[RMDB]
RNA sequence: GGGAACGACUCGAGUAGAGUCGAAAAACUAUGACAAAUUCCGUGCUGCUACCGUACAUUUUGACGAAGCGUUGAUGGCACACGCAGGAAUUGUGUACUUCUGUGCUGACAUUCUUGGGGCGAAGAAGGCCAACGUAUGAUUCGUCAUACGUUGGCCAAAAGAAACAACAACAACAAC
Reactivity to DMS in 0.01 (KOAc 150mM, MgCl2 10mM, bicine 150mM(pH8.5), 24C), signal-to-noise 1, nucleotides 027 to 126: a100c080u020a120u000g000a090c070a090a010a060u000u010c030c000g030u000g020c170u010g030c030u000a050c020c010g010u000a020c080a110u000u000u010u010g020a130c140g040a110a060g010c050g000u020u020g000a070u000g000g020c010a020c160a080c080g010c170a150g010g000a030a010u000u020g000u000g030u000a070c070u010u000c070u000g000u000g030c050u000g020a070c060a060u010u040c070u000u000g020g000g010g000c080g000a060a020g010a120a070
Reactivity to 2A3 in 0.01 (KOAc 150mM, MgCl2 10mM, bicine 150mM(pH8.5), 24C), signal-to-noise 2, nucleotides 027 to 126: a000c070u060a110u250g060a050c030a000a070a120u080u070c020c080g040u040g080c010u020g030c010u030a010c030c020g050u090a080c050a100u080u240u100u180g150a080c060g070a060a020g040c030g000u020u120g020a150u100g010g070c010a000c010a020c060g000c010a040g040g030a060a000u020u020g020u000g010u020a080c010u080u090c030u000g030u100g060c040u040g050a010c000a090u100u060c000u060u060g040g000g030g000c010g010a020a020g080a120a070
Structure probing data (DMS and 2A3) for a 177-nucleotide construct.
The DMS profile rests on 875 reads.
For 2A3 the reverse transcriptase was SuperScript II with manganese.
Conditions: 150 mM KOAc, 10 mM MgCl2 and 150 mM bicine (pH 8.5), 24 C.